[RMDB]
RNA sequence: GGGAACGACUCGAGUAGAGUCGAAAAGAACACAGCAUGUGGAGCCCAGUACAAUGGAUUGAAAUCAGCAUUUAGGGAUCAAGUUGUUGGCAUCGAGAAUAUGGAUGCUUAUGGUCAAUACUGCUGGUCGGAGUGUGUCGUUCGCGACACACUCCGAAAAAGAAACAACAACAACAAC
Reactivity to DMS in 0.01 (KOAc 150mM, MgCl2 10mM, bicine 150mM(pH8.5), 24C), signal-to-noise 1, nucleotides 027 to 126: g000a190a250c130a010c000a110g000c150a040u050g030u000g000g000a240g000c070c000c070a050g070u050a080c280a100a030u050g000g000a140u000u050g000a030a130a050u000c000a000g000c100a090u020u000u130a050g000g010g100a000u040c040a010a240g010u000u050g040u000u000g000g000c000a000u040c000g050a060g000a060a040u040a150u000g000g020a000u000g000c000u000u000a000u000g050g000u010c020a060a070u000a020c300u000g050c000u000g000g030
This 177-nucleotide RNA was probed chemically with DMS.
The data come from the RNA Mapping Database (RMDB), library OK1LIB.
Conditions: 150 mM KOAc, 10 mM MgCl2 and 150 mM bicine (pH 8.5), 24 C.